About this RNA: Chemical mapping of a 207-nucleotide RNA with 2A3. Conditions: 150 mM KOAc, 10 mM MgCl2 and 150 mM bicine (pH 8.5), 24 C. For 2A3 the reverse transcriptase was SuperScript II with manganese.
RNA sequence: GGGAACGACUCGAGUAGAGUCGAAAAGUGAACGAUUUCGGUUGUUUCUCUGAAGGCAUGAUCACCCCGUCCGAUGCGGAAGUUCGUGCUUCCGUCGAACGCGAAAGUCGGACGGCGGCCAUGAGUCAAUAUGUUUAAGGCUUCGGCCUUAAACAAAGGCUCUUUGAAGUUUCGACUUCAAAGAGCCAAAAGAAACAACAACAACAAC
Reactivity to 2A3 in 0.01 (KOAc 150mM, MgCl2 10mM, bicine 150mM(pH8.5), 24C), signal-to-noise 2, nucleotides 027 to 156: g080u050g060a160a060c050g050a150u070u070u300c110g050g000u000u020g000u000u010u000c070u030c030u040g110a110a070g130g000c020a000u020g000a010u040c030a010c000c020c000c000g000u000c010c000g000a010u050g000c000g030g030a000a010g030u130u300c130g140u300g050c000u000u000c000c010g000u050c050g060a170a060c050g000c000g150a070a020a080g030u000c000g000g000a000c000g000g020c050g010g000c020c000a000u000g020a000g000u020c030a000a050u100a130u260g000u010u000u000a000a000g010g000c000u000u040c220g040g000c000c000u000u010a000a000a000c010a010a040a010